[RMDB]
The record gives the reactivity of an RNA of 207 nucleotides to 2A3 and DMS.
RNA sequence: GGGAACGACUCGAGUAGAGUCGAAAAAUGAUCACCCCGUCCGAUGCGGAAGUUCGUGCUUCCGUCGAACGCGAAAGUCGGACGACGGCCAUGAGUCGCAACGCAAAGCCGCGGCAAGUGGAGUUAGAAAAGCGUUUGAAGUUCGCUUCAAACGCAACCUUUGAAGCUUGUUCGCAAGCUUCAAAGGAAAAGAAACAACAACAACAAC
Reactivity to 2A3 in 0.01 (KOAc 150mM, MgCl2 10mM, bicine 150mM(pH8.5), 24C), signal-to-noise 3, nucleotides 027 to 156: a000u120g010a040u080c040a130c000c000c000c000g010u000c000c000g000a000u000g020c000g000g020a000a010g020u180u300c270g140u300g080c000u010u000c020c010g010u000c010g040a100a040c090g000c030g110a120a060a020g030u000c000g000g000a000c000g000a020c040g090g070c000c000a020u040g000a000g000u000c000g000c030a080a050c070g010c200a240a230a030g080c070c120g030c030g020g000c010a030a010g000u000g000g060a060g080u050u100a040g090a070a120a010a010g000c000g000u000u000u000g000a000a000g010u040u090c160g020c180u010u000c000a010a000a000c000g000c000a010a010
Reactivity to DMS in 0.01 (KOAc 150mM, MgCl2 10mM, bicine 150mM(pH8.5), 24C), signal-to-noise 1, nucleotides 027 to 156: a140u010g020a080u020c020a170c020c010c000c060g000u000c000c000g040a070u200g070c010g000g000a050a070g040u000u000c290g020u020g020c020u010u000c020c060g050u000c010g000a100a180c140g000c030g030a200a140a150g000u000c110g000g000a170c080g030a000c040g000g000c000c020a050u010g000a300g010u010c000g010c050a050a020c000g000c050a140a200a240g010c000c010g010c010g010g000c000a080a300g050u010g000g000a100g000u000u010a110g010a030a090a150a080g010c000g000u000u000u000g020a020a010g000u010u000c280g000c000u020u000c050a020a020a050c040g040c000a010a000
Conditions: 150 mM KOAc, 10 mM MgCl2 and 150 mM bicine (pH 8.5), 24 C.